RNA sequence: GGGAACGACUCGAGUAGAGUCGAAAACGGAUCCGCUGACUGAUGGUGGGGCGCAAGCAGGGUUGGAGCUGCAGGGUUACGGGAAUAAAACCGGGAAAGCCGGUUAGUACGCAAAGGAAAUGCAUCCCUAGCAUCCAUGCUUCGGCAUGGAUGCUAGAAAAGAAACAACAACAACAAC
Reactivity to DMS in 0.01 (KOAc 150mM, MgCl2 10mM, bicine 150mM(pH8.5), 24C), signal-to-noise 1, nucleotides 027 to 126: c110g000g000a050u000c020c070g000c040u010g010a210c110u000g000a100u000g010g000u000g000g010g010g020c050g010c040a070a110g000c030a100g000g000g010u020u000g000g000a050g010c030u000g010c100a090g010g010g000u020u010a030c130g010g000g010a100a130u000a090a030a080a040c020c010g000g000g000a070a090a230g000c000c000g010g000u000u000a110g010u000a100c130g040c070a020a020a080g000g020a050a070a040u000g000c090a120u000c020c060

Chemical mapping of a 177-nucleotide RNA with DMS. Reactivities are given for positions 27 through 126. The reactions ran in a buffer of 150 mM KOAc, 10 mM MgCl2 and 150 mM bicine (pH 8.5), at 24 C.